[RMDB]
RNA sequence: GGGAACGACUCGAGUAGAGUCGAAAAACGAGUCGUACGCGACUCGACUGGUAUUGUCGGCGUAAAAGAACAAGACGUCACCGGACGCGACCGGGCUAAAAAGCGAAACGUCAUCUACGGAUGACGAAAAACGGACCUGGGUUCGCCCAGGUCCGAAGUAUAAUCUCCGCUUCGGCGGAGAUUAUACAAAAGAAACAACAACAACAAC
Reactivity to 2A3 in 0.01 (KOAc 150mM, MgCl2 10mM, bicine 150mM(pH8.5), 24C), signal-to-noise 1, nucleotides 027 to 156: a000c030g000a030g000u010c030g030u040a000c220g010c010g010a000c010u000c010g010a000c010u040g080g030u250a220u170u230g050u130c010g020g030c010g000u080a120a110a060a110g160a050a150c140a100a020g060a050c000g000u050c010a010c010c010g000g010a010c000g000c000g000a000c000c000g010g000g000c050u070a000a000a000a000a000g010c010g000a100a050a030c040g010u000c000a000u000c000u000a010c110g090g010a000u020g000a000c010g030a010a020a000a000a010c000g000g000a000c000c010u010g000g010g000u090u090c110g060c070c000c000a010g000g030u000c000c000g000a010a000